[RMDB]
RNA sequence: GGGAACGACUCGAGUAGAGUCGAAAAGUCUAGCGAUUUAGGGAUCCGAUCCGGGUGGCAGAACUCAACUGCAUGAGUAAACACGCAAGUCGCGUAUUGGCCGACCGGCCAAGGAUCUGCUAGACGACAGUAUUUAUGCCUUCGGGCAUAAAUACUGAAAAGAAACAACAACAACAAC
Reactivity to DMS in 0.01 (KOAc 150mM, MgCl2 10mM, bicine 150mM(pH8.5), 24C), signal-to-noise 4, nucleotides 027 to 126: g010u000c000u000a000g010c010g000a170u000u010u020a150g010g020g000a020u000c010c000g000a270u000c000c000g020g010g010u000g010g000c010a070g010a090a030c010u010c020a020a110c140u010g000c200a120u010g000a110g010u010a140a060a130c110a000c040g000c010a110a100g010u010c230g020c020g010u000a060u000u000g000g000c010c000g000a050c020c000g010g000c130c160a040a230g000g010a020u000c000u000g000c000u000a000g000a020c000g000a160
Reactivity to 2A3 in 0.01 (KOAc 150mM, MgCl2 10mM, bicine 150mM(pH8.5), 24C), signal-to-noise 4, nucleotides 027 to 126: g010u010c000u010a000g010c030g090a150u050u100u300a180g070g060g020a010u000c000c000g020a030u040c010c000g020g010g010u090g000g000c010a020g050a120a010c010u020c020a020a100c110u210g070c110a110u040g020a000g020u070a040a090a010c070a000c010g010c030a090a140g270u270c060g000c020g020u020a080u060u140g140g010c010c000g020a040c020c000g030g000c020c030a040a020g000g000a000u010c010u010g000c000u010a000g000a000c000g000a000
Chemical mapping of a 177-nucleotide RNA with DMS and 2A3. Reactivities are given for positions 27 through 126. The RNA was probed in 150 mM KOAc, 10 mM MgCl2 and 150 mM bicine (pH 8.5) at 24 C. The 2A3 profile rests on 4,549 reads.